[RMDB]
Chemical mapping of a 170-nucleotide RNA with DMS and 2A3. For DMS the reverse transcriptase was MarathonRT. Reactivities are given for positions 27 through 129. Source: RMDB library 15KLIB, as collected in RNAgym.
RNA sequence: GGGAACGACUCGAGUAGAGUCGAAAAAACAAGACAGAGGAGCCCCCAUGACGCUGGUGAACCAUCGCGAGCUGGGAGAGGAGAGGCGAAGAUAGCAGCGGAGACCCCGGUCCGAAUGCCCGUCGGCGAGCACAGCCGUUCGCGGCUGUGAAAAGAAACAACAACAACAAC
Reactivity to DMS in 0.01 (KOAc 150mM, MgCl2 10mM, bicine 150mM(pH8.5), 24C), signal-to-noise 4, nucleotides 027 to 129: a090a050c120a060a060g000a080c150a020g020a070g000g000a060g010c080c030c020c000c040a020u000g030a100c150g000c040u000g050g000u040g040a040a070c070c020a070u000c130g030c140g010a060g040c070u040g000g000g000a000g000a040g000g000a070g030a020g020g010c110g020a030a000g000a000u030a050g040c050a070g010c060g010g020a120g020a080c050c040c030c040g000g020u020c020c040g000a110a070u040g010c030c000c050g040u030c050g020g000c080g020a160g060
Reactivity to 2A3 in 0.01 (KOAc 150mM, MgCl2 10mM, bicine 150mM(pH8.5), 24C), signal-to-noise 3, nucleotides 027 to 129: a000a000c070a000a020g090a010c030a030g040a010g030g000a020g020c010c000c000c010c010a050u090g020a030c060g020c050u030g030g000u080g060a020a030c020c000a050u070c040g020c050g020a000g010c010u030g010g010g000a020g000a000g000g030a030g000a040g000g030c020g010a010a010g010a020u070a020g010c060a000g040c010g040g020a060g030a100c000c000c000c000g000g010u000c000c010g040a080a040u130g020c000c000c000g030u040c040g000g020c070g020a040g060